[RMDB]
RNA sequence: GGGAACGACUCGAGUAGAGUCGAAAAAUUGAGACACGGCGAAACAGAUAAUCGAGAUAGAACCAAUCAACGAGAUCAUAGAGUGAAAAGGGUAAUCUAUCUGAGUUAUUAUUAGUACGAUAUGGACCGAUAUGAUCGUCUUUACGCCCUCUAUGAAGAGGUCCAUCUUAUUCGUAAGAUGGACCUCAAAAGAAACAACAACAACAAC
Reactivity to DMS in 0.01 (KOAc 150mM, MgCl2 10mM, bicine 150mM(pH8.5), 24C), signal-to-noise 1, nucleotides 027 to 156: a110u000u010g010a160g040a100c050a150c030g000g030c060g020a170a150a190c130a170g000a080u010a030a080u000c070g000a130g020a030u000a040g000a050a080c010c050a030a120u000c010a010a140c000g000a180g010a230u020c100a110u000a090g000a230g030u000g000a040a120a020a140g000g000g000u000a040a150u000c000u000a030u000c030u010g050a140g050u000u010a040u000u000a020u020u000a050g040u010a140c030g000a100u000a120u000g000g000a110c000c050g000a040u000a070u000g000a070u020c060g000u000c080u000u000u000a030c030g000c060c000c020u000c010u000a040u060g010a130a160
Reactivity to 2A3 in 0.01 (KOAc 150mM, MgCl2 10mM, bicine 150mM(pH8.5), 24C), signal-to-noise 1, nucleotides 027 to 156: a000u020u050g040a100g000a020c060a030c100g100g010c010g000a140a050a030c080a040g010a040u050a010a040u190c060g020a000g000a040u000a000g020a040a040c000c000a020a040u090c040a000a040c010g150a070g030a170u040c050a080u110a080g220a020g100u100g030a010a020a110a150g030g030g000u080a070a070u030c000u030a010u000c000u000g010a020g010u000u060a000u020u010a030u020u010a110g030u140a020c050g000a050u000a030u090g100g000a020c000c110g020a020u030a070u170g130a140u160c060g010u000c000u000u030u030a050c070g010c000c000c000u000c010u000a130u000g010a120a090